[RMDB]
RNA sequence: GGGAACGACUCGAGUAGAGUCGAAAAGUGCAGAUUGAAAUUCAUGGGAGCCUCUCCAUAAUGGAUGAACGCCGCGCUAGUCCGCGCAGUCGCGACGUAAACGCUCUGUUUUCCCGUUCAGGCCUCACAGGCCACUAGGAUUCGUCCUAGUGGCCUGAAAAGAAACAACAACAACAAC
Reactivity to DMS in 0.01 (KOAc 150mM, MgCl2 10mM, bicine 150mM(pH8.5), 24C), signal-to-noise 2, nucleotides 027 to 126: g010u020g010c030a040g010a090u000u000g000a060a130a050u000u000c040a030u000g010g010g010a080g010c210c090u000c070u000c020c000a060u020a100a040u000g000g020a030u010g000a120a020c040g010c020c020g020c010g010c030u000a070g000u010c030c070g020c110g010c080a050g010u000c030g040c010g010a040c020g000u000a050a130a170c140g010c060u020c030u010g000u000u000u000u010c000c000c010g030u000u000c130a040g000g010c050c030u010c120a200